[RMDB]
RNA sequence: GGGAACGACUCGAGUAGAGUCGAAAAGGAAAGGAUGUUCCGUGGCCGUAAAUGCAGGUUCACAGCGCUUCGUAUCGCGGCAAUAUCGCCAGUGGUGCUGUCGUGAUGCGGUCUUCGCAUGGACCGCCCAUAUGACAGCCUUCGGGCUGUCAUAUGGAAAAGAAACAACAACAACAAC
Reactivity to 2A3 in 0.01 (KOAc 150mM, MgCl2 10mM, bicine 150mM(pH8.5), 24C), signal-to-noise 3, nucleotides 027 to 126: g070g030a060a010a000g110g040a090u100g070u080u000c030c010g000u060g020g000c030c030g040u110a030a020a080u140g020c060a070g010g040u040u060c020a030c040a090g000c010g000c050u060u050c010g020u030a010u010c020g000c000g010g000c010a010a020u060a040u070c050g070c140c080a140g030u170g230g000u030g030c020u010g000u010c010g000u010g000a010u040g000c010g000g000u020c040u040u060c010g010c030a050u040g000g020a000c000c010g000c010
Reactivity to DMS in 0.01 (KOAc 150mM, MgCl2 10mM, bicine 150mM(pH8.5), 24C), signal-to-noise 4, nucleotides 027 to 126: g010g010a100a080a040g010g010a090u000g010u000u000c020c020g010u020g040g010c020c030g010u020a040a100a090u010g010c040a100g030g010u000u000c020a060c140a100g020c050g000c300u000u000c020g030u000a010u010c010g010c010g010g010c010a050a040u000a010u000c040g020c060c170a120g010u020g010g020u010g000c060u000g010u000c010g050u000g010a030u000g010c000g000g010u010c040u000u000c100g020c070a210u000g010g000a020c010c010g010c070

The record gives the reactivity of an RNA of 177 nucleotides to 2A3 and DMS. For DMS, 3,283 sequencing reads were counted. For 2A3, 3,747 sequencing reads were counted. DMS adducts were read by reverse transcription with MarathonRT.